This 207-nucleotide RNA was probed chemically with DMS and 2A3. The 2A3 profile rests on 2,692 reads.

[RMDB]
RNA sequence: GGGAACGACUCGAGUAGAGUCGAAAAUUUAUGCCAGUCUUUGCUUUAUUUAGGUAUAGACACAUAAGACUACCAUAAUUCAGAUCGUUAGUCUUUGAAUAAUCAUGUGGACUGACUUCCCUGGGAAGUCGGUGAAGAAUUAGAAAGUACACAAUUACUGAGUACGAUUAUUCGUAAUCGUACUCAGAAAAGAAACAACAACAACAAC
Reactivity to DMS in 0.01 (KOAc 150mM, MgCl2 10mM, bicine 150mM(pH8.5), 24C), signal-to-noise 3, nucleotides 027 to 156: u000u000u000a010u020g000c020c040a170g030u000c000u000u000u000g000c020u000u000u000a120u060u000u010a060g030g010u000a050u010a030g010a090c020a060c030a040u000a030a020g010a130c060u000a180c040c030a180u000a050a100u000u000c080a090g040a150u000c060g010u000u010a080g020u000c020u000u010u010g010a080a090u000a050a090u000c080a110u010g000u010g030g020a080c000u010g000a020c010u000u000c000c010c060u010g060g060g010a060a050g010u000c020g000g020u010g020a070a080g000a110a110u000u000a130g010a090a040a110g020u000a040c040a030c030a020a060u010u000a110
Reactivity to 2A3 in 0.01 (KOAc 150mM, MgCl2 10mM, bicine 150mM(pH8.5), 24C), signal-to-noise 2, nucleotides 027 to 156: u040u050u010a040u050g060c070c030a010g000u000c020u090u070u050g020c020u150u180u170a200u160u300u220a180g010g010u010a040u010a020g020a000c020a000c010a150u040a050a000g010a010c030u030a030c030c040a060u070a150a110u140u120c060a040g070a210u080c040g040u050u060a020g000u010c000u050u070u060g090a100a080u200a070a060u150c080a080u080g060u080g080g030a000c000u000g000a000c000u000u000c030c040c120u140g090g030g010a000a000g020u000c020g000g000u030g010a050a040g010a030a010u080u080a070g080a080a080a030g060u110a050c060a000c010a080a090u080u070a060
For 2A3 the reverse transcriptase was SuperScript II with manganese. DMS adducts were read by reverse transcription with MarathonRT.